[RMDB]
RNA sequence: GGGAACGACUCGAGUAGAGUCGAAAAGACGCCUGAUGGCGAACGUGCGCAAGAUAAGAAUGGUGGUAUAUACUGCCGAGAAUAACUAAUGGACGGCAGAGCGCACGGACCACCAAAGUCCACCAGAGAUUAUCGGUGGGUUCGCCCACCGAUAAUCAAAAGAAACAACAACAACAAC
Reactivity to DMS in 0.01 (KOAc 150mM, MgCl2 10mM, bicine 150mM(pH8.5), 24C), signal-to-noise 2, nucleotides 027 to 126: g000a150c030g010c000c000u010g060a300u060g040g010c000g010a120a070c000g010u000g000c070g020c010a200a140g000a090u050a020a030g000a090a130u050g000g000u000g000g020u000a070u030a170u000a150c070u000g000c000c000g000a200g020a300a100u000a120a210c050u030a130a070u000g000g000a120c000g000g000c000a000g040a100g000c010g100c040a000c030g000g000a170c000c000a100c160c110a030a120a060g000u010c000c000a010c040c000a080g000a210
Reactivity to 2A3 in 0.01 (KOAc 150mM, MgCl2 10mM, bicine 150mM(pH8.5), 24C), signal-to-noise 3, nucleotides 027 to 126: g010a020c000g000c000c110u180g260a120u280g020g000c000g000a030a000c000g000u020g000c000g000c000a050a080g000a290u160a220a030g030a090a060u080g000g000u010g000g050u020a060u010a000u010a070c000u000g020c000c000g010a030g140a020a130u300a130a040c110u230a100a070u150g180g010a040c000g020g000c000a000g010a010g000c020g020c010a030c000g010g020a040c010c000a070c040c000a080a020a000g040u050c000c000a000c000c000a020g000a000
About this RNA: An RNA of 177 nucleotides, treated with DMS and 2A3 and read out base by base. 2A3 adducts were read by reverse transcription with SuperScript II with manganese. Conditions: 150 mM KOAc, 10 mM MgCl2 and 150 mM bicine (pH 8.5), 24 C.